[RMDB]
RNA sequence: GGGAACGACUCGAGUAGAGUCGAAAAGAUUUAAAUGACUACUUACAGCACAUAUUAAAGUCAACCAAUAUGAAAUGCCUGACUCCAGAAAAGGCCCUUUCUGGUUACUGUGGCUUUAUGGCAGCCAUGCCUAAUAGUUCUUCGGAACUAUUAGGCAAAAAGAAACAACAACAACAAC
Reactivity to DMS in 0.01 (KOAc 150mM, MgCl2 10mM, bicine 150mM(pH8.5), 24C), signal-to-noise 3, nucleotides 027 to 126: g010a110u010u000u010a050a070a090u010g010a230c020u000a070c070u000u000a120c130a030g000c030a040c040a070u000a110u000u010a060a050a030g000u000c060a050a110c090c070a030a090u000a080u020g010a120a100a070u000g010c060c040u000g010a130c080u000c000c010a050g000a030a030a040a070g010g000c060c090c050u000u000u010c020u000g010g000u000u000a040c190u000g010u000g010g010c010u010u010u000a060u000g000g030c080a050g020c000c020a070
Reactivity to 2A3 in 0.01 (KOAc 150mM, MgCl2 10mM, bicine 150mM(pH8.5), 24C), signal-to-noise 1, nucleotides 027 to 126: g000a000u000u070u300a060a080a080u090g030a060c000u030a000c030u200u210a090c180a040g030c030a040c030a130u140a090u070u210a070a070a040g120u070c030a000a100c040c030a010a000u070a100u250g040a150a200a060u080g030c000c080u100g050a130c000u000c040c010a000g020a030a070a000a000g190g020c000c000c000u000u030u000c060u090g000g080u000u040a050c050u060g030u010g060g040c110u030u050u000a110u100g010g030c000a010g000c030c000a010